This 177-nucleotide RNA was probed chemically with DMS and 2A3. For DMS the reverse transcriptase was MarathonRT. It was measured as part of the RMDB libraries RFM100 and RFMREP. 2A3 adducts were read by reverse transcription with SuperScript II with manganese. Conditions: 150 mM KOAc, 10 mM MgCl2 and 150 mM bicine (pH 8.5), 24 C.

[RMDB]
RNA sequence: GGGAACGACUCGAGUAGAGUCGAAAACUUCACCCUGCUGGUCUAUCCGUGGCACCUCCCACCAAGUGAAAGCGGCUUCCCCAUCCCUCUCCCCUGGCAAUGUCCUCCUUCUCCAGGGCUCUAAGUAAUACAUAUGUUGGUUCGCCAACAUAUGUAUAAAAGAAACAACAACAACAAC
Reactivity to DMS in 0.01 (KOAc 150mM, MgCl2 10mM, bicine 150mM(pH8.5), 24C), signal-to-noise 9, nucleotides 027 to 126: c100u010u010c090a090c040c030c020u000g010c040u010g010g000u010c030u010a080u010c050c040g020u010g010g010c070a080c050c030u000c020c010c010a090c080c070a070a080g010u010g010a050a090a100g020c060g010g000c060u000u010c020c010c010c030a120u010c020c010c020u000c040u000c030c010c010c020u000g000g000c140a070a080u010g000u000c020c010u000c030c020u000u000c040u000c020c040a070g000g000g010c070u010c040u010a040a080g010u010a100
Reactivity to 2A3 in 0.01 (KOAc 150mM, MgCl2 10mM, bicine 150mM(pH8.5), 24C), signal-to-noise 4, nucleotides 027 to 126: c020u080u050c030a080c010c000c000u020g020c020u040g010g060u040c020u040a100u030c040c030g040u060g030g000c040a040c020c010u030c020c010c000a050c020c020a090a030g060u060g130a090a030a020g050c020g010g000c000u040u040c000c000c000c000a040u030c010c000c000u000c010u010c000c000c000c000u010g020g000c040a040a090u070g030u020c000c000u010c000c000u020u030c010u000c010c010a020g010g040g000c010u010c010u040a070a080g040u050a070